The record gives the reactivity of an RNA of 207 nucleotides to 2A3. Source: RMDB library M2RFOK, as collected in RNAgym. Conditions: 150 mM KOAc, 10 mM MgCl2 and 150 mM bicine (pH 8.5), 24 C.

RNA sequence: GGGAACGACUCGAGUAGAGUCGAAAAGAUUUAAACAGAUGGAGAUACACAAAUGUUUGAAUCCUAGUAACAAAAAUCCUGGUAUCUCGGGUAUACAGUAGUGCAGAUACUGUAUUUUUAAUGCUCCUUAGGUUUUCCAUCUUCGGAUGGAAAACAAGGUAAGAUGUCUGUUCGCAGACAUCUUACCAAAAGAAACAACAACAACAAC
Reactivity to 2A3 in 0.01 (KOAc 150mM, MgCl2 10mM, bicine 150mM(pH8.5), 24C), signal-to-noise 2, nucleotides 027 to 156: g000a000u040u010u020a000a000a000c000a020g050a090u070g020g010a020g010a020u020a010c000a000c000a000a190a040u030g000u010u010u010g000a000a000u000c000c000u100a100g060u170a110a080c070a080a180a020a020a040u020c000c010u010g030g000u030a000u000c000u010c000g000g000g010u000a000u000a010c000a000g010u010a020g010u030g230c070a020g060a200u000a010c000u000g000u000a000u020u030u000u050u120a070a130u100g020c030u120c060c030u020u070a070g080g060u010u000u000u000c000c000a000u000c010u010u020c170g130g000a010u000g000g000a000a000a000a000c000a000a000